[RMDB]
RNA sequence: GGGAACGACUCGAGUAGAGUCGAAAACGAGACCCGUAGCGCAGGGCAAAACUUCCACGGGCAACUGUGGGACGGCUCUGUAAAAAAGGAGAGGGAGUUCAUGAACAGCAACUCCCACUUCCAGUGGCCCUUGUAGGUAGUUCGCUACCUACAAGGGAAAAGAAACAACAACAACAAC
Reactivity to DMS in 0.01 (KOAc 150mM, MgCl2 10mM, bicine 150mM(pH8.5), 24C), signal-to-noise 4, nucleotides 027 to 126: c200g000a150g030a170c030c020c020g000u040a070g010c240g000c000a000g000g020g020c020a100a020a050a080c300u000u030c010c010a000c000g010g000g000c300a110a060c010u010g000u000g000g000g010a000c100g000g000c010u050c000u020g010u030a000a040a040a050a120a050g050g020a030g000a090g020g020g000a020g000u010u000c050a100u040g030a180a200c290a130g000c140a050a000c000u010c000c000c010a010c000u000u000c000c010a070g010u020g010g020
Reactivity to 2A3 in 0.01 (KOAc 150mM, MgCl2 10mM, bicine 150mM(pH8.5), 24C), signal-to-noise 5, nucleotides 027 to 126: c080g030a010g090a070c000c000c010g020u060a060g030c040g000c030a010g010g000g010c020a050a070a090a210c040u010u000c000c000a000c010g000g020g030c030a100a070c040u000g000u010g000g000g010a000c020g000g000c010u000c000u000g010u040a030a020a030a030a000a010g010g010a010g010a060g000g010g000a000g000u020u030c060a050u200g220a200a120c060a070g070c050a000a000c000u010c030c010c010a020c010u060u020c000c010a060g040u090g120g020